Structure probing data (DMS and 2A3) for a 177-nucleotide construct.
It was measured as part of the RMDB library OK2TST.
The DMS profile rests on 1,121 reads.
Conditions: 150 mM KOAc, 10 mM MgCl2 and 150 mM bicine (pH 8.5), 24 C.
Values are in units of 0.01, from 0 to 300, in steps of 10.
RNA sequence: GGGAACGACUCGAGUAGAGUCGAAAACGCCUCGUCGGCAAGUUCGCCGACCAGCAACCCGUCUUCGAUCGGGCCCUGGCCACCAUCCCCGACGCGCUCGCGGUGCUGGCCGAUGAGCGGGACACGCCUUCCAUGCUUGGUUCGCCAAGCAUGGAAGAAAAGAAACAACAACAACAAC
Reactivity to DMS in 0.01 (KOAc 150mM, MgCl2 10mM, bicine 150mM(pH8.5), 24C), signal-to-noise 1, nucleotides 027 to 126: c160g000c080c050u000c200g060u000c020g010g020c000a160a170g030u000u010c140g030c000c000g010a030c020c090a020g000c050a120a150c010c010c000g030u000c050u010u000c130g000a050u010c030g040g010g000c090c030c060u010g030g000c010c030a080c020c050a130u000c020c030c020c060g020a040c070g020c080g050c050u000c020g000c130g020g000u000g010c090u000g010g010c010c030g000a030u000g000a040g000c010g000g000g000a140c120a060c050g010c090
Reactivity to 2A3 in 0.01 (KOAc 150mM, MgCl2 10mM, bicine 150mM(pH8.5), 24C), signal-to-noise 1, nucleotides 027 to 126: c070g010c020c030u010c000g030u010c000g000g030c030a030a060g240u060u120c120g000c000c000g020a040c010c000a000g030c020a020a060c040c000c010g050u020c070u200u130c080g140a210u020c040g010g060g000c020c010c040u040g040g000c040c030a070c000c010a070u150c010c020c010c020g060a040c020g010c030g000c030u030c020g000c000g000g000u040g050c020u120g110g000c000c000g080a130u080g010a000g060c000g000g000g020a030c060a000c070g050c040